[RMDB]
RNA sequence: GGGAACGACUCGAGUAGAGUCGAAAAAUGCUGAAGUUAAUAAAGCACUAGUUAAAGCUUUCAUUGAUGACAAGAAAGUAUGCGAAGUGGAUUGUCGAGGAUAAUAUGCACAUUGUUUUAUUUAAACCUACUCCGUAUAAUGUCAGGAAAAAUACUCCUUACAGACCACGUUCGCGUGGUCUGUAAGAAAAGAAACAACAACAACAAC
Reactivity to 2A3 in 0.01 (KOAc 150mM, MgCl2 10mM, bicine 150mM(pH8.5), 24C), signal-to-noise 2, nucleotides 027 to 156: a000u100g040c040u070g010a110a010g040u150u100a100a070u090a030a170a000g030c000a000c070u020a000g130u140u110a040a040a000g020c020u010u010u010c090a070u030u120g080a130u100g050a070c010a010a090g050a010a020a010g080u070a040u050g070c050g010a040a020g020u020g000g130a170u120u030g060u020c140g020a030g060g070a000u060a110a040u090a060u110g010c050a050c050a100u040u100g030u020u100u030u020a090u050u080u080a060a040a010c010c000u020a050c010u000c050c040g030u050a020u050a160a030u060g050u000c010a010g010g170a000a000a000a070a020u090a020c010u050c030
Reactivity to DMS in 0.01 (KOAc 150mM, MgCl2 10mM, bicine 150mM(pH8.5), 24C), signal-to-noise 1, nucleotides 027 to 156: a040u020g000c000u000g000a120a300g100u020u000a080a100u000a030a100a060g060c020a110c070u000a110g020u000u000a030a100a200g040c010u000u000u000c100a120u000u000g010a140u020g050a100c050a040a070g040a050a180a020g040u000a080u000g000c010g010a050a070g020u010g040g030a030u020u000g000u000c110g010a110g000g010a070u000a020a040u000a050u000g030c070a040c130a130u000u000g020u000u000u020u000a130u020u020u000a050a010a100c000c010u000a020c000u000c000c100g040u000a090u010a070a050u010g000u000c040a160g100g010a030a040a020a010a040u020a050c070u000c050